[RMDB]
RNA sequence: GGGAACGACUCGAGUAGAGUCGAAAAUUAACGGCCUAAAAUAACAUCAUUUAUUAACCCACAGUUUCUGUGGGUUGGGGCUCUGGGCACAGCUUAGCUGGGUCUCUCAAGUCUGCAAUUAAGAUGUCAUCCAGGGCUGGUCUCAUCUGAGGCUCAGCGUUACAGUACGCUUCGGCGUACUGUAACGAAAAGAAACAACAACAACAAC
Reactivity to 2A3 in 0.01 (KOAc 150mM, MgCl2 10mM, bicine 150mM(pH8.5), 24C), signal-to-noise 1, nucleotides 027 to 156: u160u090a120a030c050g030g000c010c000u070a060a050a030a070u110a030a030c020a040u080c050a060u070u120u140a130u090u120a030a000c000c010c000a000c000a020g050u060u140u180c040u000g000u000g000g060g020u000u070g000g060g010g000c000u000c030u020g000g010g000c010a000c020a040g000c010u150u120a050g030c000u030g040g010g010u000c060u000c010u020c010a050a110g020u000c020u120g120c040a040a090u020u060a020a050g010a030u060g000u030c020a050u000c050c060a040g000g000g000c000u000g040g010u020c010u000c000a190u070c080u100g010a020g010g000c010u060c190a000g000
Source: RMDB library OK3TST, as collected in RNAgym. The record gives the reactivity of an RNA of 207 nucleotides to 2A3. Reactivities are given for positions 27 through 156. The 2A3 profile rests on 648 reads. The RNA was probed in 150 mM KOAc, 10 mM MgCl2 and 150 mM bicine (pH 8.5) at 24 C.